[RMDB]
RNA sequence: GGGAACGACUCGAGUAGAGUCGAAAACGUGACCGGGAGAUCCGAGCAGAGGCAUAGCGAACUGCGCACGGAGAAGCCUUGAGGGAAUGCCGUAGGACCCGGGUUCGAUUCCCGGCAGCAAAAUAAAGGCGUCAGACUGGUUCGCCAGUCUGACGUCAAAAGAAACAACAACAACAAC
Reactivity to 2A3 in 0.01 (KOAc 150mM, MgCl2 10mM, bicine 150mM(pH8.5), 24C), signal-to-noise 2, nucleotides 027 to 126: c010g060u030g050a090c000c000g000g000g000a050g020a020u000c010c020g000a030g000c000a010g000a040g130g000c110a180u090a070g030c070g060a160a060c030u060g010c040g020c040a040c060g000g010a020g050a080a020g040c000c000u020u070g060a150g050g010g000a010a050u070g120c000c060g020u030a020g070g000a010c000c000c000g000g000g000u000u030c000g020a040u090u010c000c000c000g000g010c000a020g030c020a000a000a000a070u060a030a090a020
Reactivity to DMS in 0.01 (KOAc 150mM, MgCl2 10mM, bicine 150mM(pH8.5), 24C), signal-to-noise 2, nucleotides 027 to 126: c070g050u020g000a110c000c000g000g000g000a030g000a180u000c030c010g000a110g010c050a030g020a190g070g030c040a100u020a150g000c030g030a090a020c020u000g000c030g020c110a060c010g000g000a070g000a110a160g020c010c020u000u010g000a120g030g000g000a070a090u050g000c020c020g000u040a120g000g000a100c000c000c000g010g020g000u000u000c030g010a190u060u010c000c010c000g030g010c150a050g000c140a040a070a070a040u020a100a090a090